[RMDB]
RNA sequence: GGGAACGACUCGAGUAGAGUCGAAAAUUUUGUAGUAAUUUGUAAGUUUUGAAAAAACCAAUAAUUUCAUCAACGCGGUGUUUUGGUAAAUCAUUGACGGAGUUAAUCUCUUUGUAACGCGGAUCACGCAUAGUAAUGGGUUCGCCCAUUACUAUGCAAAAGAAACAACAACAACAAC
Reactivity to 2A3 in 0.01 (KOAc 150mM, MgCl2 10mM, bicine 150mM(pH8.5), 24C), signal-to-noise 1, nucleotides 027 to 126: u030u050u030u220g020u000a210g020u020a070a060u060u060u100g030u000a120a130g080u000u050u080u080g040a020a140a000a000a050a090c000c040a020a040u150a300a090u210u150u130c020a000u070c020a050a190c110g030c050g030g040u050g050u040u060u120u090g000g010u050a220a000a000u020c000a000u080u130g000a050c070g000g000a060g010u000u060a150a210u110c030u060c010u000u080u110g060u050a060a030c020g000c020g100g040a050u130c000a000c170
Reactivity to DMS in 0.01 (KOAc 150mM, MgCl2 10mM, bicine 150mM(pH8.5), 24C), signal-to-noise 2, nucleotides 027 to 126: u000u000u000u010g020u010a100g010u000a060a040u010u000u000g000u000a150a100g010u010u000u000u000g010a000a070a080a100a080a060c030c030a030a040u010a050a050u000u000u010c010a030u010c030a110a140c090g030c040g020g040u000g000u000u020u000u000g010g010u000a040a100a140u000c060a060u010u000g000a090c100g000g000a060g020u000u010a060a120u000c020u000c000u000u010u000g000u000a070a090c040g010c040g010g000a070u000c150a090c140
The record gives the reactivity of an RNA of 177 nucleotides to 2A3 and DMS. Conditions: 150 mM KOAc, 10 mM MgCl2 and 150 mM bicine (pH 8.5), 24 C. The 2A3 profile rests on 558 reads. For DMS the reverse transcriptase was MarathonRT. Reactivities are given for positions 27 through 126.